Source information:
This 177-nucleotide RNA was probed chemically with 2A3. For 2A3 the reverse transcriptase was SuperScript II with manganese. It was measured as part of the RMDB library M2PK50. The RNA was probed in 150 mM KOAc, 10 mM MgCl2 and 150 mM bicine (pH 8.5) at 24 C.
RNA sequence: GGGAACGACUCGAGUAGAGUCGAAAAGCCACUGCCUUCGGGCAGUGGCAAAAGAAAGCGAUUUCUGACCGCUUUUAAGUCAGAAAAAGAUCGAAAGAUCAAAAACGUCAGACUUCGGUCUGACGAAGCGUAUAAAUCAGUUCGCUGAUUUAUACGCAAAAGAAACAACAACAACAAC
Reactivity to 2A3 in 0.01 (KOAc 150mM, MgCl2 10mM, bicine 150mM(pH8.5), 24C), signal-to-noise 1, nucleotides 027 to 126: g000c020c000a020c010u010g030c010c020u010u070c210g020g000g050c000a010g010u000g000g000c000a000a000a000a000g030a040a110a000g010c010g040a060u040u040u000c000u000g010a000c000c010g010c000u130u100u030u220a070a000g000u000c000a000g020a030a020a000a020a000g010a000u000c000g030a090a010a020g000a010u010c010a000a030a000a070a050c000g010u010c000a010g000a010c000u020u120c240g070g010u000c010u010g000a000c000g000a020a020